An RNA of 177 nucleotides, treated with DMS and 2A3 and read out base by base. The DMS profile rests on 3,290 reads. Conditions: 150 mM KOAc, 10 mM MgCl2 and 150 mM bicine (pH 8.5), 24 C. For 2A3 the reverse transcriptase was SuperScript II with manganese. For DMS the reverse transcriptase was MarathonRT. For 2A3, 1,778 sequencing reads were counted. Reactivities are given for positions 27 through 126.
RNA sequence: GGGAACGACUCGAGUAGAGUCGAAAAGAGUAAUGGGCGCGCAAGGUGAGAUGAAGCUGUAGUCUCACUGGAAGGACUAGAGGUUAGAGGAGACCCGCCCAAAACAAGAAACAGCUUCAUCAAGAGAAUCCUGGUAUCAUUUCGAUGAUACCAGGAUAAAAGAAACAACAACAACAAC
Reactivity to DMS in 0.01 (KOAc 150mM, MgCl2 10mM, bicine 150mM(pH8.5), 24C), signal-to-noise 3, nucleotides 027 to 126: g000a140g000u040a020a200u030g020g000g020c000g040c150g000c180a020a040g010g040u010g000a110g010a000u000g000a020a010g020c010u000g000u000a110g030u000c020u000c080a060c020u010g000g010a110a100g000g000a130c030u010a130g010a130g000g000u000u020a030g010a210g000g000a110g000a020c030c070c040g000c000c000c040a030a050a090a060c190a070a130g010a140a090a030c000a000g000c010u000u020c030a040u000c030a230a130g010a030g000a090
Reactivity to 2A3 in 0.01 (KOAc 150mM, MgCl2 10mM, bicine 150mM(pH8.5), 24C), signal-to-noise 3, nucleotides 027 to 126: g090a000g020u160a070a040u150g040g000g000c010g000c010g000c070a050a060g110g060u050g040a160g010a030u010g000a020a010g000c000u020g010u050a030g060u030c010u010c040a070c010u000g000g020a010a060g050g040a030c020u060a020g010a110g120g010u080u090a020g010a050g270g000a010g050a100c000c000c000g000c000c000c000a040a130a000a000c050a040a020g060a030a080a000c000a020g000c000u000u020c030a130u040c090a080a030g040a000g060a220